[RMDB]
RNA sequence: GGGAACGACUCGAGUAGAGUCGAAAAGAAAGGGACCCCUGCCAAGGGAGCGUCGGUCAGCACCCGAAGCAUAUUUUUUUAUGCCGCUGACACCCCUCGACGCAGCAGGAGGGGUGGUCCCGAAAGAAAUAUUAGGGUACUUCGGUACCCUAAUAUUAAAAGAAACAACAACAACAAC
Reactivity to DMS in 0.01 (KOAc 150mM, MgCl2 10mM, bicine 150mM(pH8.5), 24C), signal-to-noise 5, nucleotides 027 to 126: g000a110a130a170g010g000g000a050c010c000c010c010u010g000c030c070a140a150g010g010g000a160g020c020g010u000c020g020g010u000c000a010g020c010a230c160c110c100g010a100a140g010c000a010u000a000u010u000u010u010u020u000u000a010u000g010c000c120g020c020u000g000a020c020a140c030c040c030c040u000c000g010a040c040g010c020a100g000c080a110g000g000a080g010g010g000g010u000g010g020u000c010c010c000g010a060a080a100g010a110
Reactivity to 2A3 in 0.01 (KOAc 150mM, MgCl2 10mM, bicine 150mM(pH8.5), 24C), signal-to-noise 1, nucleotides 027 to 126: g010a020a060a020g020g000g000a010c020c000c000c000u040g100c020c040a110a030g140g010g060a100g030c000g010u030c030g010g020u010c010a000g010c000a090c040c110c060g020a060a010g030c000a020u020a070u030u260u070u080u000u020u000a010u020g020c020c060g010c010u000g010a000c020a050c000c090c000c020u020c000g000a020c040g040c010a020g120c030a010g000g100a060g000g050g010g040u040g010g000u020c010c000c020g000a000a020a000g010a010